[RMDB]
RNA sequence: GGGAACGACUCGAGUAGAGUCGAAAAAUUUGUAUGGUGGGUAGAUUGCAAUACAUGUAAACGGAAGAAUGGUUUCAUGCCAAAUUGGCCAAAACACGCAACACCACAAUUCUUAGAGCAUCUACGACUUAUACCCGCAGUUCGCUGCGGGUAUAAGAAAAGAAACAACAACAACAAC
Reactivity to 2A3 in 0.01 (KOAc 150mM, MgCl2 10mM, bicine 150mM(pH8.5), 24C), signal-to-noise 1, nucleotides 027 to 126: a000u080u030u110g120u000a090u120g060g010u010g010g000g060u010a010g000a110u030u130g000c040a120a000u000a200c010a000u050g080u220a010a160a030c040g040g030a100a050g100a230a070u080g060g000u000u050u150c060a040u100g000c000c010a080a250a150u080u140g060g000c000c010a000a150a060a050c090a020c050g070c040a050a100c000a040c040c000a060c020a040a060u100u030c030u020u100a090g000a040g180c020a030u040c010u060a020c100g010a020
Reactivity to DMS in 0.01 (KOAc 150mM, MgCl2 10mM, bicine 150mM(pH8.5), 24C), signal-to-noise 2, nucleotides 027 to 126: a130u010u000u000g000u000a130u000g010g000u000g000g030g040u010a050g040a110u020u020g010c030a120a050u000a120c090a030u010g000u010a000a080a130c120g000g020a100a030g010a120a130u010g000g070u010u010u000c130a050u010g030c040c040a050a060a110u000u020g010g000c030c070a070a010a070a060c140a110c090g000c100a010a060c100a110c050c030a050c030a070a090u000u000c020u000u000a110g000a120g030c120a070u000c030u000a030c100g000a280